Record summary: An RNA of 177 nucleotides, treated with 2A3 and DMS and read out base by base. The 2A3 profile rests on 2,857 reads. The reactions ran in a buffer of 150 mM KOAc, 10 mM MgCl2 and 150 mM bicine (pH 8.5), at 24 C. DMS adducts were read by reverse transcription with MarathonRT.
[RMDB]
RNA sequence: GGGAACGACUCGAGUAGAGUCGAAAAGCGCAUGCGACGUUGAAGGGCCGCGGGAUCGUUGCGAGCCAGAUAGAUUGUGGGGCCAAUCGUGGUGCUCACAAAUGCGGCGAGGAACACCCACGCCUGCCAGGCUUACUCUUUUCGAAGAGUAAGCCUGAAAAGAAACAACAACAACAAC
Reactivity to 2A3 in 0.01 (KOAc 150mM, MgCl2 10mM, bicine 150mM(pH8.5), 24C), signal-to-noise 3, nucleotides 027 to 126: g050c050g030c060a070u180g070c050g060a090c030g120u030u100g140a100a120g010g010g030c070c060g000c010g010g000g000a080u190c130g010u010u100g110c010g020a010g000c000c010a080g050a140u080a030g180a100u030u020g000u020g010g000g020g000c010c000a040a090u240c140g110u050g010g050u220g210c000u000c020a000c020a000a010a010u070g040c030g000g020c000g010a030g010g000a010a010c020a040c010c000c010a000c020g020c000c000u020g000c020
Reactivity to DMS in 0.01 (KOAc 150mM, MgCl2 10mM, bicine 150mM(pH8.5), 24C), signal-to-noise 4, nucleotides 027 to 126: g010c050g000c060a110u020g020c080g000a060c060g000u000u000g000a130a150g010g020g020c110c050g050c070g000g000g010a040u010c150g010u000u000g000c020g010a300g000c010c000a070g020a110u020a030g000a200u010u000g030u000g020g000g000g010c030c010a060a140u000c250g020u000g020g020u000g000c000u000c000a010c000a010a020a040u000g000c080g000g000c010g000a190g010g000a030a040c040a080c020c000c000a070c080g010c020c010u000g010c120